Conditions: 150 mM KOAc, 10 mM MgCl2 and 150 mM bicine (pH 8.5), 24 C. Structure probing data (DMS) for a 177-nucleotide construct.

RNA sequence: GGGAACGACUCGAGUAGAGUCGAAAAGGAGGUCAGACUCAGGCUCCCCACUCCAGGGUGCACUGCUGCGUCGUCCGGGCUGCAGUGGUGUCCUUGGAGUGGCCCCUGAAAAUCUGCAGGUGCCGGGUCCCUCUCUACGUUUCGACGUAGAGAGGGAAAAAGAAACAACAACAACAAC
Reactivity to DMS in 0.01 (KOAc 150mM, MgCl2 10mM, bicine 150mM(pH8.5), 24C), signal-to-noise 1, nucleotides 027 to 126: g010g010a100g000g030u010c030a050g000a060c190u000c010a020g010g000c010u010c220c220c010c010a000c000u000c010c020a000g000g020g030u000g010c010a000c000u000g010c010u000g010c000g000u000c030g020u000c240c250g030g010g000c040u010g030c000a010g010u000g000g020u010g000u010c000c020u000u000g010g000a010g020u000g000g000c100c300c000c000u000g010a040a040a080a120u000c020u010g000c080a120g040g020u000g010c000c000g000g000g010

It was measured as part of the RMDB library OK2TRN.
Values are in units of 0.01, from 0 to 300, in steps of 10.